[RMDB]
This 177-nucleotide RNA was probed chemically with DMS and 2A3. For 2A3 the reverse transcriptase was SuperScript II with manganese. The 2A3 profile rests on 5,091 reads. Conditions: 150 mM KOAc, 10 mM MgCl2 and 150 mM bicine (pH 8.5), 24 C.
RNA sequence: GGGAACGACUCGAGUAGAGUCGAAAAGCAAGAUGCUUCGGCAUCUUGCAGUCGUAGCGCGAUCGACAGAAUUACUGCUAUGUCGAACGAGGAAGAGCGCGCACAUCAUCCCUUUCGAGGGAUGAAAGCGAUAAAUUCGAUUCGUCGAAUUUAUCGCAAAAGAAACAACAACAACAAC
Reactivity to DMS in 0.01 (KOAc 150mM, MgCl2 10mM, bicine 150mM(pH8.5), 24C), signal-to-noise 4, nucleotides 027 to 126: g010c020a000a000g000a000u000g000c010u000u000c160g060g010c000a000u000c000u000u000g020c000a010g010u000c050g020u010a070g020c020g010c010g000a150u000c000g010a010c000a020g000a160a150u000u010a090c200u010g010c100u000a090u000g010u000c000g010a040a050c060g000a130g020g010a060a060g000a100g010c000g000c000g020c000a120c230a200u000c000a000u000c010c000c010u000u000u010c190g010a020g010g010g000a000u010g010a020a050a110
Reactivity to 2A3 in 0.01 (KOAc 150mM, MgCl2 10mM, bicine 150mM(pH8.5), 24C), signal-to-noise 3, nucleotides 027 to 126: g000c010a000a010g000a000u010g000c020u040u110c190g100g000c010a000u000c000u010u000g000c000a010g040u020c040g030u040a030g010c000g000c000g020a050u020c000g000a000c000a000g100a100a050u230u160a180c090u130g130c070u090a070u110g020u020c000g020a020a070c040g010a080g110g130a070a040g050a020g070c000g000c000g020c000a010c000a050u020c000a000u000c010c010c000u000u020u030c160g090a000g000g010g000a010u010g000a040a020a020